An RNA of 177 nucleotides, treated with DMS and 2A3 and read out base by base. For DMS the reverse transcriptase was MarathonRT. Reactivities are given for positions 27 through 126. For DMS, 1,535 sequencing reads were counted. DMS (dimethyl sulfate) methylates the pairing face of unpaired adenines and cytosines. The reactions ran in a buffer of 150 mM KOAc, 10 mM MgCl2 and 150 mM bicine (pH 8.5), at 24 C.
RNA sequence: GGGAACGACUCGAGUAGAGUCGAAAAGGUAAGGAAGAAGAGCCCUGCGAUAUAAAUAACACUUCAUUCAUGCUGGAUAUAACUUUUCAAGAUUUGAGCACGCCGCAAAGGCUGCAGAACAAUGUAAGCUAUAGGAUCAGUUCGCUGAUCCUAUAGCAAAAGAAACAACAACAACAAC
Reactivity to DMS in 0.01 (KOAc 150mM, MgCl2 10mM, bicine 150mM(pH8.5), 24C), signal-to-noise 3, nucleotides 027 to 126: g020g010u000a030a100g030g010a090a070g020a090a080g010a120g000c040c050c020u000g000c080g030a140u010a090u000a060a060a060u020a130a080c100a060c050u010u000c050a060u020u000c030a100u000g020c010u000g000g010a110u030a050u000a040a070c100u000u000u000u000c080a070a070g000a120u000u030u010g020a120g000c010a030c190g030c000c010g010c170a060a090a130g020g000c020u000g010c010a140g000a060a080c110a100a080u020g010u000a080a100
Reactivity to 2A3 in 0.01 (KOAc 150mM, MgCl2 10mM, bicine 150mM(pH8.5), 24C), signal-to-noise 2, nucleotides 027 to 126: g030g010u040a100a000g030g040a030a030g000a000a040g010a060g040c000c000c030u010g020c070g070a020u000a010u040a210a230a000u130a040a050c030a050c080u030u020c000a040u020u110c030a030u070g010c010u010g060g060a020u060a020u040a190a070c050u110u130u090u100c050a110a110g000a250u060u070u130g010a020g010c000a000c060g000c000c010g050c100a160a040a000g010g030c000u000g000c030a020g030a070a030c050a060a060u280g000u270a080a020